[RMDB]
Chemical mapping of a 177-nucleotide RNA with DMS. Reactivities are given for positions 27 through 126. For DMS the reverse transcriptase was MarathonRT.
RNA sequence: GGGAACGACUCGAGUAGAGUCGAAAAUUCAAGCGAUUCGUCGCUUGAACCUGAGGAGACUCAAGCAAAAUUGUUCCCUUUUGCUUUUGCUUUCCUGUUUUAAGUAGUAGUGCUUCGGCACUACUAACGUUCGUUUACCGUUCGCGGUAAACGAACGAAAAGAAACAACAACAACAAC
Reactivity to DMS in 0.01 (KOAc 150mM, MgCl2 10mM, bicine 150mM(pH8.5), 24C), signal-to-noise 1, nucleotides 027 to 126: u010u000c000a000a010g000c000g020a010u000u010c220g020u010c000g020c000u000u000g010a010a060c000c000u000g030a020g010g010a030g000a020c000u000c060a010a010g020c000a030a000a000a000u010u020g010u000u010c010c000c000u010u010u000u000g020c000u000u010u000u000g000c220u000u000u000c000c010u000g000u000u000u010u010a100a120g010u000a010g010u000a040g000u000g010c000u000u020c170g040g020c010a010c000u010a000c000u000a010a060
Description:
The data come from the RNA Mapping Database (RMDB), library M2PK50.